[RMDB]
RNA sequence: GGGAACGACUCGAGUAGAGUCGAAAAGUUCAUCCCCUGAUCAAGGAUGCCCGAAACGGUGAGGCGGAAAGCAAAUUAAAUAACGUCAACACAUCGGGACGGUUGGCCAGUUAAGAAGUGAGGAUUCAAAAGAUCGAACCGUUCGCGGUUCGAUCAAGCCUAUCUAUUGGUUCGCCAAUAGAUAGGCAAAAGAAACAACAACAACAAC
Reactivity to DMS in 0.01 (KOAc 150mM, MgCl2 10mM, bicine 150mM(pH8.5), 24C), signal-to-noise 1, nucleotides 027 to 156: g050u000u040c010a030u020c020c000c000c020u000g030a090u010c060a150a090g050g020a110u000g030c050c030c040g020a060a070a200c100g000g000u000g000a110g010g030c020g020g000a070a100a100g040c120a060a090a130u000u000a130a050a160u020a110a100c030g040u000c020a060a060c020a140c040a140u010c060g000g030g000a090c080g010g010u000u000g030g000c030c040a070g000u010u020a050a070g000a080a100g000u000g010a110g000g030a110u000u000c020a050a030a040a190g000a020u000c000g000a020a020c000c000g000u000u010c250g050c000g060g060u000u000c020g010a010u000c000a040a100
Reactivity to 2A3 in 0.01 (KOAc 150mM, MgCl2 10mM, bicine 150mM(pH8.5), 24C), signal-to-noise 3, nucleotides 027 to 156: g050u100u100c010a050u040c020c000c010c020u050g050a090u060c030a020a000g050g010a040u060g040c000c060c010g050a110a130a020c130g070g000u050g000a060g010g010c010g020g060a200a060a000g100c130a070a110a120u190u190a090a120a110u120a050a000c020g010u000c020a020a020c000a040c000a080u020c010g030g000g050a040c000g070g030u020u000g000g000c070c030a040g010u060u110a140a020g040a060a000g070u070g040a040g090g080a060u120u040c100a020a020a000a090g000a000u000c000g000a000a000c000c010g000u030u030c090g000c000g100g000u000u010c010g000a000u000c000a000a000